This 177-nucleotide RNA was probed chemically with 2A3. The data come from the RNA Mapping Database (RMDB), library OK1LIB. The reactions ran in a buffer of 150 mM KOAc, 10 mM MgCl2 and 150 mM bicine (pH 8.5), at 24 C.
RNA sequence: GGGAACGACUCGAGUAGAGUCGAAAACGCUCGGAAACUCAAAUGUCUUUUUUGAAAAGCUUGUCUGCAUUAAUUUAUAAACAGAUUCAGGAUUAUGCAUUGGAUUUUCAACACAAACAUUACAACGCACGGCUUCAGAAUUCGUUCUGAAGCCGUGAAAAGAAACAACAACAACAAC
Reactivity to 2A3 in 0.01 (KOAc 150mM, MgCl2 10mM, bicine 150mM(pH8.5), 24C), signal-to-noise 1, nucleotides 027 to 126: c000g030c000u120c010g010g070a070a150a150c090u120c080a130a110a000u010g010u030c030u120u040u020u020u000u120g050a120a110a000a000g050c000u100u060g070u040c000u030g010c010a000u200u000a110a050u020u150u160a150u130a080a130a110c130a030g030a110u140u150c070a040g040g090a010u020u160a010u090g070c070a030u020u060g010g010a030u000u000u000u030c000a010a010c030a000c010a110a140a000c000a010u000u180a030c040a240a000c010g000